This 177-nucleotide RNA was probed chemically with 2A3 and DMS. The RNA was probed in 150 mM KOAc, 10 mM MgCl2 and 150 mM bicine (pH 8.5) at 24 C. The data come from the RNA Mapping Database (RMDB), library OK2TRN. For 2A3 the reverse transcriptase was SuperScript II with manganese.
RNA sequence: GGGAACGACUCGAGUAGAGUCGAAAAAUUGGUCAGCACUUGUUUAUAAUCGUGCCACAUCGCUCCUAUCGACAGCUUCUCACCUUGGCGUGAGGCGGUUUCUGGCAUCGCGCGCCACAGCCCCACACAGAUACACCCGAUUCGUCGGGUGUAUCUGAAAAGAAACAACAACAACAAC
Reactivity to 2A3 in 0.01 (KOAc 150mM, MgCl2 10mM, bicine 150mM(pH8.5), 24C), signal-to-noise 2, nucleotides 027 to 126: a000u070u110g040g000u060c030a010g020c030a030c080u110u130g080u140u280u100a220u100a060a130u120c050g020u030g020c000c000a050c000a040u080c030g020c000u080c000c010u030a060u050c030g050a060c000a040g000c030u140u030c010u030c040a030c030c040u050u210g120g000c010g010u010g020a080g030g000c010g030g030u080u180u070c060u080g030g020c000a030u030c040g010c000g010c000g000c020c000a030c010a020g060c000c000c030c000a020c000a000
Reactivity to DMS in 0.01 (KOAc 150mM, MgCl2 10mM, bicine 150mM(pH8.5), 24C), signal-to-noise 3, nucleotides 027 to 126: a090u020u010g020g010u010c040a080g000c030a090c070u000u020g000u020u000u020a100u020a110a090u000c110g020u010g000c040c030a050c080a080u000c070g000c050u000c060c020u010a070u000c060g020a080c100a100g000c050u000u000c010u000c000a060c050c010u000u010g010g030c080g010u000g010a070g000g010c070g010g010u000u000u010c100u000g000g020c040a060u000c080g000c100g000c020g020c020c040a030c090a050g010c050c010c000c040a090c180a160